[RMDB]
RNA sequence: GGGAACGACUCGAGUAGAGUCGAAAAUGUCAUCGCUGACGCUCACCACGUCUUCCAGCAGUAACAUGGGCGCGUCGUGGGGCAGAUAAGCGCCGGGGGAUAAAUAGUGGCUCACGAAACCCUCCCGAUUUGAGUCUGAAUUCGUUCAGACUCAAAUAAAAGAAACAACAACAACAAC
Reactivity to DMS in 0.01 (KOAc 150mM, MgCl2 10mM, bicine 150mM(pH8.5), 24C), signal-to-noise 3, nucleotides 027 to 126: u000g020u010c060a050u000c080g030c060u020g010a040c050g020c030u010c090a170c020c030a100c100g020u000c050u000u030c090c060a070g010c080a100g010u010a120a060c110a070u000g010g020g010c300g010c050g020u000c040g010u020g020g020g000g020c010a030g000a070u020a090a100g010c070g030c040c010g010g010g000g010g000a110u010a050a090a090u000a090g020u000g010g000c030u000c040a070c050g010a070a080a130c040c010c020u000c000c000c010g000
Reactivity to 2A3 in 0.01 (KOAc 150mM, MgCl2 10mM, bicine 150mM(pH8.5), 24C), signal-to-noise 1, nucleotides 027 to 126: u090g030u030c050a070u100c100g050c140u070g000a020c040g000c060u020c000a150c050c000a020c020g000u020c000u060u040c060c010a030g040c020a060g110u110a100a060c030a060u050g030g010g000c060g000c020g030u040c020g010u020g020g030g030g020c000a020g040a060u120a160a020g030c080g000c060c010g010g000g020g000g010a070u110a160a120a030u100a050g060u020g060g000c020u050c020a040c040g030a030a070a080c000c000c000u000c020c010c000g010